Notes: Source: RMDB library OK2TST, as collected in RNAgym. An RNA of 177 nucleotides, treated with DMS and 2A3 and read out base by base. Conditions: 150 mM KOAc, 10 mM MgCl2 and 150 mM bicine (pH 8.5), 24 C.

[RMDB]
RNA sequence: GGGAACGACUCGAGUAGAGUCGAAAAUGUGCUGGCGGUGGAGAACGCAUUCAAGUGUCGCGUUCGCCUGGACGGGUCGGUACAACGAAGCCUACGGUAUCGAUCCAUUGCUGGGCACUCGGGUGCACUCCGUAUGGCGGUUCGCCGCCAUACGGAGAAAAGAAACAACAACAACAAC
Reactivity to DMS in 0.01 (KOAc 150mM, MgCl2 10mM, bicine 150mM(pH8.5), 24C), signal-to-noise 2, nucleotides 027 to 126: u030g000u000g020c080u010g000g020c020g040g070u010g000g000a010g010a080a060c040g030c000a120u000u040c230a140a110g010u000g050u010c120g000c000g000u000u000c050g000c000c010u000g000g030a090c230g010g020g010u000c000g000g000u000a000c030a120a090c060g000a110a150g010c070c080u030a150c130g020g020u010a000u000c000g000a010u000c000c000a080u010u020g000c060u000g020g000g020c040a040c030u000c090g000g000g010u000g000c080a150
Reactivity to 2A3 in 0.01 (KOAc 150mM, MgCl2 10mM, bicine 150mM(pH8.5), 24C), signal-to-noise 2, nucleotides 027 to 126: u150g010u010g050c070u040g050g000c010g000g040u030g030g040a050g000a070a010c020g000c040a000u120u090c100a140a110g170u040g020u240c090g010c020g040u030u040c010g040c000c020u040g020g090a050c020g030g000g010u020c010g020g040u020a020c000a100a070c090g050a040a060g120c010c070u090a070c090g030g000u010a010u040c000g000a000u000c000c000a020u040u050g020c040u060g000g000g000c040a030c020u040c030g060g000g030u100g050c030a010